[RMDB]
RNA sequence: GGGAACGACUCGAGUAGAGUCGAAAACAUAGUGAGCGAUUGUACCACCUGAUAACAUUCGGCUUCUAGGACCAAAUACCAUUAUCUUCCUUCCAGUAGAGGGGUCUAAGGAGUUCUGCACUUGUGUAGGAGGAUAGAACGUUUCGUCGCUGACAGAACUAAUGCUAUCCUUCGGGAUAGCAUUAGUAAAAGAAACAACAACAACAAC
Reactivity to 2A3 in 0.01 (KOAc 150mM, MgCl2 10mM, bicine 150mM(pH8.5), 24C), signal-to-noise 4, nucleotides 027 to 156: c060a070u180a030g040u060g050a000g010c040g030a020u040u120g060u090a070c010c050a040c050c040u120g090a110u090a220a030c030a040u070u130c050g070g020c030u010u030c040u090a060g040g040a060c020c030a060a060a040u160a060c050c030a050u140u110a050u130c040u070u030c010c010u050u030c010c020a000g000u050a030g040a040g010g060g000g040u000c030u010a060a050g090g010a070g030u100u090c030u080g030c020a070c060u120u070g070u050g010u080a030g000g030a010g030g010a020u010a050g080a080a080c090g000u000u040u060c030g000u000c000g020c180u040g060a010c030a060g110a070
Reactivity to DMS in 0.01 (KOAc 150mM, MgCl2 10mM, bicine 150mM(pH8.5), 24C), signal-to-noise 2, nucleotides 027 to 156: c060a150u000a080g030u010g010a040g020c000g020a080u000u010g020u000a190c010c030a090c120c050u000g000a110u010a050a110c050a150u000u000c070g040g020c020u010u010c020u000a180g030g000a090c020c010a090a080a080u000a060c080c000a100u000u000a070u000c010u000u000c020c010u000u010c050c030a110g000u000a100g010a080g000g000g050g010u010c010u000a140a100g020g020a100g000u000u000c010u010g000c010a080c010u000u010g050u000g010u020a060g000g000a050g000g010a000u000a060g000a060a120c040g000u000u000u000c100g010u000c010g030c040u010g000a160c140a090g000a140